[RMDB]
RNA sequence: GGGAACGACUCGAGUAGAGUCGAAAAGUGUGCCGCAAGUGGGAGGUGCUGGCGACGGUGAUCGGCGAGGUCACCGACGGCGACCGGCUGCAGAUCACCUGGCACGGCGAGACGGUGGUCGACGUGCAGCGGUUGUAGCGUUCGCGCUACAACCGCUAAAAGAAACAACAACAACAAC
Reactivity to DMS in 0.01 (KOAc 150mM, MgCl2 10mM, bicine 150mM(pH8.5), 24C), signal-to-noise 1, nucleotides 027 to 126: g000u020g020u000g000c000c030g000c070a080a080g020u000g020g010g020a130g010g010u000g020c070u000g000g000c010g020a180c120g020g000u000g030a000u010c010g040g000c160g020a210g030g030u000c000a010c010c000g000a030c120g000g020c080g000a140c030c040g020g000c030u010g010c040a030g000a040u000c050a030c000c050u010g020g000c070a010c030g000g000c020g000a090g000a110c080g000g010u010g000g020u000c000g000a050c060g000u000g020c100